[RMDB]
Source: RMDB libraries RFM100 and RFMREP, as collected in RNAgym. This 177-nucleotide RNA was probed chemically with 2A3 and DMS. In probing experiments dimethyl sulfate is read out at A N1 and C N3, which are open when not base-paired. For DMS the reverse transcriptase was MarathonRT.
RNA sequence: GGGAACGACUCGAGUAGAGUCGAAAAGAAGAAACUCAUUAAUUCAUUGAUGAGGGCCCCUCAUUCAAAUGUUAUGCUUCGUGCUUCCCUCACAUUUUGAGUUGAUUCUUCCCAAUUUCGAGAGUGAAUGUGCCUUUAAAUUCGUUUAAAGGCACAUAAAAGAAACAACAACAACAAC
Reactivity to 2A3 in 0.01 (KOAc 150mM, MgCl2 10mM, bicine 150mM(pH8.5), 24C), signal-to-noise 9, nucleotides 027 to 126: g010a010a000g000a020a010a000c010u000c010a020u060u130a150a130u250u140c100a050u040u170g050a120u020g000a130g020g010g010c000c010c010c020u040c020a200u300u080c080a080a090a070u160g070u170u130a070u170g030c010u060u130c180g090u140g030c010u120u120c000c000c000u020c000a020c010a020u040u080u040u010g000a010g000u010u000g020a030u000u000c000u030u030c000c000c000a020a050u070u100u080c110g040a110g020a020g120u110g090a070
Reactivity to DMS in 0.01 (KOAc 150mM, MgCl2 10mM, bicine 150mM(pH8.5), 24C), signal-to-noise 6, nucleotides 027 to 126: g000a040a010g000a290a040a010c010u000c000a010u010u000a100a120u020u030c130a080u020u000g000a080u000g020a010g000g020g010c090c030c020c030u000c060a120u030u010c130a060a070a070u000g010u020u030a060u010g000c040u000u030c120g010u020g010c050u010u010c000c000c010u000c010a020c050a060u000u000u000u010g000a020g000u000u000g000a250u000u010c020u000u000c010c000c000a100a140u010u010u010c060g000a100g000a080g010u010g020a110
2A3 adducts were read by reverse transcription with SuperScript II with manganese. The RNA was probed in 150 mM KOAc, 10 mM MgCl2 and 150 mM bicine (pH 8.5) at 24 C.